The record gives the reactivity of an RNA of 207 nucleotides to DMS and 2A3.
Reactivities are given for positions 27 through 156.
The reactions ran in a buffer of 150 mM KOAc, 10 mM MgCl2 and 150 mM bicine (pH 8.5), at 24 C.
[RMDB]
RNA sequence: GGGAACGACUCGAGUAGAGUCGAAAAGUGCAUGUCGAGCUUGAGUGGCGCUCGUAAAUCUGCAUUCAACAAACCAACUGCAAACGACGAACGUUUCGCACUCGCCGCUUAAACACCGGUGAGCCUUGCAACAGCACGCUGACGGGCUGGGCAAGGGCUCACAGGGACGGUUCGCCGUCCCUGUGAGAAAAGAAACAACAACAACAAC
Reactivity to DMS in 0.01 (KOAc 150mM, MgCl2 10mM, bicine 150mM(pH8.5), 24C), signal-to-noise 2, nucleotides 027 to 156: g000u000g000c050a060u010g010u000c040g000a080g030c000u000u000g030a080g070u000g010g030c140g010c010u010c020g040u000a050a080a090u000c090u000g040c030a060u000u000c050a100a160c050a110a090a130c040c060a060a100c090u010g000c040a030a060a040c040g010a120c050g000a080a080c090g020u000u000u000c060g020c050a090c010u000c020g020c020c020g000c020u000u010a110a080a150c060a070c110c010g020g010u000g000a060g000c000c010u000u000g020c000a050a090c020a040g010c020a050c000g030c120u010g010a120c040g020g000g030c030u000g000g050g010c020a040a070g000g010g000
Reactivity to 2A3 in 0.01 (KOAc 150mM, MgCl2 10mM, bicine 150mM(pH8.5), 24C), signal-to-noise 9, nucleotides 027 to 156: g020u010g010c010a020u080g030u110c020g010a010g000c030u100u120g070a070g070u080g080g040c050g000c030u000c010g050u060a030a070a110u070c040u020g000c010a010u060u100c060a060a090c040a090a100a070c020c030a050a070c050u110g040c080a080a090a040c070g130a020c050g060a150a030c050g020u010u020u020c050g000c030a030c010u000c000g000c000c000g000c010u020u030a040a020a000c030a010c010c010g020g000u010g010a010g010c000c000u010u000g000c020a210a220c000a150g000c000a010c040g060c080u090g120a110c090g050g020g000c000u000g010g010g000c000a000a000g010g000g000